[RMDB]
RNA sequence: GGGAACGACUCGAGUAGAGUCGAAAAGGUUAGGAAUGGACUGGGAUGAAUCUCCUGCCAAUCCAGGGGAAUAUGGCCCUUAUCGUCAAUCAGAAAGAGCGGACAUUUACCAACCGUUAAUUGAUCACGAUACGCACGCAUUCGUGCGUGCGUAUCGAAAAGAAACAACAACAACAAC
Reactivity to 2A3 in 0.01 (KOAc 150mM, MgCl2 10mM, bicine 150mM(pH8.5), 24C), signal-to-noise 2, nucleotides 027 to 126: g070g030u090u100a050g010g050a010a030u020g000g010a040c120u100g060g000g040a000u080g000a000a150u010c000u000c000c000u020g080c010c010a010a060u070c000c040a000g050g040g000g010a030a080u130a070u110g070g000c000c000c000u020u060a140u130c020g010u020c010a030a150u000c010a000g300a150a090a030g140a070g070c050g000g000a030c020a050u010u080u110a170c020c010a010a010c000c010g040u040u090a040a210u050u080g010a030u230c000a020
Reactivity to DMS in 0.01 (KOAc 150mM, MgCl2 10mM, bicine 150mM(pH8.5), 24C), signal-to-noise 1, nucleotides 027 to 126: g060g040u000u040a000g000g000a100a080u030g000g000a220c090u000g000g060g000a000u000g000a120a190u050c100u000c000c000u030g000c150c000a050a050u000c200c060a000g000g000g000g000a080a090u000a040u000g000g200c010c000c030u000u040a110u000c000g020u040c160a160a130u060c110a060g100a150a080a130g000a000g090c010g000g000a080c030a000u000u040u000a120c000c000a030a120c070c050g000u100u000a000a060u000u030g000a130u000c060a010
An RNA of 177 nucleotides, treated with 2A3 and DMS and read out base by base. Reactivities are given for positions 27 through 126. DMS adducts were read by reverse transcription with MarathonRT. 2A3 adducts were read by reverse transcription with SuperScript II with manganese.